[RMDB]
RNA sequence: GGGAACGACUCGAGUAGAGUCGAAAAGAUAUGGACGUUGUGAGCAACAGCUUGUGUGUCGGAAACGACACCAAGACAUGCUCAUCAACGUCCUAAGUCAAAUCAUGCUAGGUUCGCCUAGCAUGAACGAUUGAGUCUCGUUCGCGAGACUCAAUCGAAAAGAAACAACAACAACAAC
Reactivity to 2A3 in 0.01 (KOAc 150mM, MgCl2 10mM, bicine 150mM(pH8.5), 24C), signal-to-noise 1, nucleotides 027 to 126: g010a000u020a030u100g000g010a000c010g010u000u000g000u020g010a020g000c060a080a250c150a250g000c010u050u060g100u000g000u020g020u300c010g010g010a020a000a010c000g000a000c050a000c000c010a010a010g040a010c030a170u300g020c010u000c000a010u070c010a000a010c000g010u020c000c000u000a000a000g000u020c010a020a060a070u050c010a000u000g000c000u000a020g000g060u050u050c290g140c040c020u000a000g000c000a000u000g000a000a010
Reactivity to DMS in 0.01 (KOAc 150mM, MgCl2 10mM, bicine 150mM(pH8.5), 24C), signal-to-noise 2, nucleotides 027 to 126: g010a020u000a160u020g010g010a010c000g020u000u000g010u000g000a000g020c000a060a090c210a200g030c010u000u000g000u010g030u010g010u000c000g000g010a030a030a120c000g020a000c000a000c000c000a000a020g000a030c070a300u000g010c010u000c000a010u020c050a020a020c000g000u000c000c000u000a000a050g000u000c000a100a120a150u000c010a030u000g000c010u000a010g000g010u000u000c240g030c000c000u000a000g000c000a000u000g020a000a090